[RMDB]
Notes: Structure probing data (2A3) for a 207-nucleotide construct. It was measured as part of the RMDB library RNAMAK. The RNA was probed in 150 mM KOAc, 10 mM MgCl2 and 150 mM bicine (pH 8.5) at 24 C.
RNA sequence: GGGAACGACUCGAGUAGAGUCGAAAACUUGUAGGUUCGCCUACAAGAAAAAAGAUAUGGAAACCGCAGGCUCGAUAAGCUGGUGUCGGAAACGACAUGCAGCUUUUGACGAGCCUGGGUUUCCUAAGUCAAAAACGUGGAUCUUCGGAUCCACGAACUCUAGUUACUGCUUCGGCAGUAACUAGAGAAAAGAAACAACAACAACAAC
Reactivity to 2A3 in 0.01 (KOAc 150mM, MgCl2 10mM, bicine 150mM(pH8.5), 24C), signal-to-noise 2, nucleotides 027 to 156: c000u000u000g010u020a000g010g000u030u050c230g120c040c010u010a010c000a000a020g030a030a040a020a000a010a000g040a030u040a040u070g000g000a010a010a000c020c030g140c180a000g000g000c000u010c060g110a050u050a300a010g010c000u000g000g020u000g000u000c000g000g040a020a040a020c030g020a020c020a010u150g100c010a020g010c000u000u000u040u050g030a010c020g000a000g050c000c000u000g000g000g000u010u000u000c000c000u000a010a000g010u010c030a030a000a010a100a160c020g000u010g000g000a000u000c010u040u050c240g120g000a010u000c000c000a000c010g010a010a030